[RMDB]
RNA sequence: GGGAACGACUCGAGUAGAGUCGAAAAGGCUGGUCAGCGACAGCUCCCACCUCACGUCACCAAUAAAAUUCAAGAAUCUGACGAUGGAUCUGCUUUGUUGAUUACAGUCGAUCCGACACUGGAGCAAACUGGGAAAAUGGUUCGCCAUUUUCCCAGUAAAAGAAACAACAACAACAAC
Reactivity to 2A3 in 0.01 (KOAc 150mM, MgCl2 10mM, bicine 150mM(pH8.5), 24C), signal-to-noise 2, nucleotides 027 to 126: g020g000c010u010g000g000u030c000a020g020c020g060a010c000a000g000c000u050c020c020c000a090c040c030u070c010a070c070g060u000c000a020c050c000a060a030u180a150a220a020a020u300u210c100a120a070g040a090a130u090c060u100g000a030c010g060a030u130g010g020a020u000c010u040g050c050u140u110u200g120u040u100g060a090u030u140a080c010a060g000u000c000g010a040u000c020c000g060a030c070a050c050u060g070g000a070g040c070a230a000
Reactivity to DMS in 0.01 (KOAc 150mM, MgCl2 10mM, bicine 150mM(pH8.5), 24C), signal-to-noise 2, nucleotides 027 to 126: g040g000c020u010g000g000u000c020a030g050c030g000a050c170a050g000c070u030c030c000c080a160c060c040u000c090a150c030g020u000c010a050c040c070a090a090u030a030a060a100a190u000u000c140a090a090g000a060a030u000c090u010g070a040c050g000a180u000g000g010a020u000c000u010g010c090u020u000u000g010u000u000g020a090u000u000a180c010a030g000u000c020g010a120u000c020c000g000a040c110a110c120u020g000g000a060g030c040a010a070
This 177-nucleotide RNA was probed chemically with 2A3 and DMS. DMS adducts were read by reverse transcription with MarathonRT. The DMS profile rests on 1,071 reads. It was measured as part of the RMDB library OK2TST. Conditions: 150 mM KOAc, 10 mM MgCl2 and 150 mM bicine (pH 8.5), 24 C.